[RMDB]
RNA sequence: GGGAACGACUCGAGUAGAGUCGAAAAGCUAACCAGAAAAUAUAGGAAAGGGAAAUAUAAACAAGAUAACACAAGGAAAACUAGUUAUAUCAGCUAUGGCCAUGUAAUUAGGUCAAACAUCUUUUAAAUAGGUGUGAAUGAGUCAGAAAGCAGAAUACGACUAUGACCAUUUCGAUGGUCAUAGUCGAAAAGAAACAACAACAACAAC
Reactivity to 2A3 in 0.01 (KOAc 150mM, MgCl2 10mM, bicine 150mM(pH8.5), 24C), signal-to-noise 1, nucleotides 027 to 156: g070c040u050a020a030c020c000a050g020a000a220a000a020u300a020u060a020g020g000a050a050a000g000g000g000a010a010a010u110a000u010a020a160a000c090a000a010g000a070u160a080a110c110a000c000a060a010g060g000a080a190a040a000c020u020a010g040u020u010a160u000a010u180c060a000g120c010u100a010u120g040g000c000c020a020u060g020u110a060a030u070u070a040g000g000u010c000a000a070a000c010a020u000c010u010u090u140u120a110a150a230u140a160g000g000u000g000u000g020a030a120u110g000a000g050u000c060a000g050a100a110a000g000c020a000g030a110a000u150a030
The record gives the reactivity of an RNA of 207 nucleotides to 2A3. Values cover nucleotides 27 to 156. Values are in units of 0.01, from 0 to 300, in steps of 10.